[RMDB]
RNA sequence: GGGAACGACUCGAGUAGAGUCGAAAAUGCGAGAACAGCAAGUGCUCUGCACCACUGACGUCACUCUCUGCUCACCUCCAGUGGCAAGGCCAGUGAGCUUGCAGGCUUGUCACGGGAUGAAUACUGUGCGGCCCUUCGCCACUCAGACGGGAGCAGAGGUAAUUUACUCGUUCGCGAGUAAAUUACCAAAAGAAACAACAACAACAAC
Reactivity to 2A3 in 0.01 (KOAc 150mM, MgCl2 10mM, bicine 150mM(pH8.5), 24C), signal-to-noise 2, nucleotides 027 to 156: u170g010c060g010a060g020a110a060c050a060g050c060a090a130g040u040g020c030u070c160u300g010c020a040c010c010a060c040u030g070a080c070g050u080c050a050c080u050c000u000c000u000g000c000u000c040a300c010c000u010c020c000a000g000u000g000g010c000a020a010g000g010c000c000a110g060u090g170a050g050c020u080u200g090c080a070g080g000c000u080u120g100u160c000a000c010g000g010g020a100u200g120a090a070u180a110c010u010g000u010g020c000g000g000c070c000c000u030u050c070g000c000c000a000c000u050c040a040g010a060c130g010g000g000a000g000c000a000g000a000
Reactivity to DMS in 0.01 (KOAc 150mM, MgCl2 10mM, bicine 150mM(pH8.5), 24C), signal-to-noise 1, nucleotides 027 to 156: u010g000c050g040a060g030a120a140c020a070g120c080a080a190g020u000g040c060u000c040u000g110c000a120c020c040a070c060u020g020a100c000g020u000c080a100c070u020c050u000c010u000g040c070u010c110a020c000c040u010c020c040a040g030u000g000g050c030a110a070g000g050c040c030a230g020u030g010a170g030c030u010u010g040c180a180g000g010c000u000u010g000u010c000a040c060g000g000g030a270u000g000a070a080u000a030c060u000g000u000g020c100g000g000c030c000c080u030u000c140g000c000c010a040c000u010c110a030g000a060c140g040g010g000a010g040c010a000g010a030

Source: RMDB library OK3TST, as collected in RNAgym.
Structure probing data (2A3 and DMS) for a 207-nucleotide construct.
For 2A3 the reverse transcriptase was SuperScript II with manganese.
For DMS the reverse transcriptase was MarathonRT.
The reactions ran in a buffer of 150 mM KOAc, 10 mM MgCl2 and 150 mM bicine (pH 8.5), at 24 C.
For DMS, 1,966 sequencing reads were counted.
Values cover nucleotides 27 to 156.